Conditions: 150 mM KOAc, 10 mM MgCl2 and 150 mM bicine (pH 8.5), 24 C.
The record gives the reactivity of an RNA of 177 nucleotides to DMS and 2A3.
RNA sequence: GGGAACGACUCGAGUAGAGUCGAAAAGGAACGUUGUUCGCAACGUUCCGUGCCGGAAACGGACAUGACGAUCGCGCGCAUGUCGGGAUACCGUAAACGCGAGCAUCAUGGUGUUCGCACCAUGAAAUUCAGUGCUCGGAUUCGUCCGAGCACUGAAAAAAGAAACAACAACAACAAC
Reactivity to DMS in 0.01 (KOAc 150mM, MgCl2 10mM, bicine 150mM(pH8.5), 24C), signal-to-noise 2, nucleotides 027 to 126: g000g000a000a020c020g020u000u000g050u000u020c200g000c010a020a010c000g000u030u000c000c040g000u000g020c030c010g000g010a040a080a060c090g000g040a030c010a030u000g000a150c030g000a050u000c030g000c020g030c060g040c030a050u000g010u020c010g010g020g010a170u020a090c210c060g010u010a050a130a050c000g010c000g000a020g010c300a150u000c000a010u000g000g040u000g010u000u000c170g020c000a020c020c000a000u010g010a020a140a110
Reactivity to 2A3 in 0.01 (KOAc 150mM, MgCl2 10mM, bicine 150mM(pH8.5), 24C), signal-to-noise 1, nucleotides 027 to 126: g000g000a000a000c000g020u000u010g050u060u080c200g000c100a010a000c000g000u000u000c000c000g010u030g030c020c000g040g110a150a190a030c060g120g000a000c010a020u060g060a130c000g020a060u000c000g000c000g000c000g000c000a000u000g000u010c000g050g090g020a090u110a060c040c020g070u100a070a240a000c030g000c000g010a000g000c000a140u030c000a000u010g000g000u000g000u090u030c190g010c030a000c050c020a000u000g040a050a010a000

For DMS, 1,154 sequencing reads were counted.
For 2A3 the reverse transcriptase was SuperScript II with manganese.